An RNA of 177 nucleotides, treated with 2A3 and DMS and read out base by base. High 2A3 reactivity points to a flexible backbone, as in loops and unpaired stretches. The 2A3 profile rests on 1,849 reads. Source: RMDB library M2PK90, as collected in RNAgym.
RNA sequence: GGGAACGACUCGAGUAGAGUCGAAAAUGAAAGCUGUGUGAGCGAGGCGCGCGGAGGAUGAGGCCGUGCCCGGGCUCUGGCUGCAGCCGCCCGGGGACACGCCGUGCACCCUCGGGCUCCGGAAAAAAUAAUAUAGAAUGUUCGCAUUCUAUAUUAUAAAAGAAACAACAACAACAAC
Reactivity to 2A3 in 0.01 (KOAc 150mM, MgCl2 10mM, bicine 150mM(pH8.5), 24C), signal-to-noise 1, nucleotides 027 to 126: u200g020a110a050a070g060c030u020g060u010g060u070g160a060g080c040g000a050g000g010c030g000c000g000c020g080g020a010g090g040a110u120g050a030g180g000c120c080g000u030g000c000c010c010g030g030g000c020u060c090u080g020g000c050u150g030c040a040g020c030c020g030c010c000c000g000g000g000g000a010c000a000c010g040c020c000g000u020g020c030a010c000c000c020u000c000g040g140g000c000u000c010c000g060g000a040a170a000a020a000
Reactivity to DMS in 0.01 (KOAc 150mM, MgCl2 10mM, bicine 150mM(pH8.5), 24C), signal-to-noise 5, nucleotides 027 to 126: u010g010a100a070a140g010c020u000g020u000g000u010g010a050g020c010g000a080g020g020c230g020c020g030c020g010g010a050g010g000a140u000g010a110g000g020c090c100g020u000g010c000c000c010g000g010g020c030u010c160u000g020g020c060u010g010c190a090g000c030c090g010c010c000c000g010g010g000g000a060c010a050c070g000c030c020g010u010g000c030a040c090c010c010u000c010g010g000g010c010u000c000c030g000g020a000a010a080a100a080